[RMDB]
Notes:
The record gives the reactivity of an RNA of 207 nucleotides to 2A3 and DMS. The data come from the RNA Mapping Database (RMDB), library M2RFPK. The reactions ran in a buffer of 150 mM KOAc, 10 mM MgCl2 and 150 mM bicine (pH 8.5), at 24 C.

RNA sequence: GGGAACGACUCGAGUAGAGUCGAAAAAUCUUUAAGCAGAUGGCAGGUUCACCCCGUACGGUGCGGAAGUUCGCGCUUCCGUGAAACGCGAAAAUCGGACGGUGGCUGCAAGUCGCAUCGCAGAACCUAUAGCUUGUUAGGUUCGCCUAACAAGCAAGUAAUAAUGAUCGUUCGCGAUCAUUAUUACAAAAGAAACAACAACAACAAC
Reactivity to 2A3 in 0.01 (KOAc 150mM, MgCl2 10mM, bicine 150mM(pH8.5), 24C), signal-to-noise 6, nucleotides 027 to 156: a010u070c050u040u150u090a100a040g020c070a040g020a060u040g060g010c020a010g030g010u120u110c010a040c000c010c000c000g000u030a030c040g000g020u040g010c010g010g010a020a010g010u130u230c090g030c030g010c110u010u000c000c000g010u020g060a090a080a010c130g040c010g070a060a020a010a090u110c010g000g020a010c070g000g040u070g040g000c040u050g010c030a030a030g050u050c040g000c050a020u030c030g010c020a030g030a080a050c020c010u070a090u070a140g000c000u000u000g000u000u000a000g010g010u020u030c130g060c020c000u000a000a010c010a000a000g010c010a000a010
Reactivity to DMS in 0.01 (KOAc 150mM, MgCl2 10mM, bicine 150mM(pH8.5), 24C), signal-to-noise 2, nucleotides 027 to 156: a060u020c050u020u000u000a110a120g060c070a120g010a100u000g000g010c060a050g020g030u000u000c060a070c000c020c000c000g030u000a010c020g010g030u000g010c000g000g000a040a080g010u000u000c130g010c200g020c020u000u000c020c120g030u000g020a070a070a020c050g030c000g000a060a070a100a090u010c020g010g000a050c080g000g000u000g020g010c050u000g020c050a110a060g000u010c030g020c030a100u000c020g010c040a110g000a040a040c020c000u010a110u000a150g010c010u000u000g010u000u000a000g000g020u000u000c300g020c020c000u000a010a010c000a000a000g010c010a010a060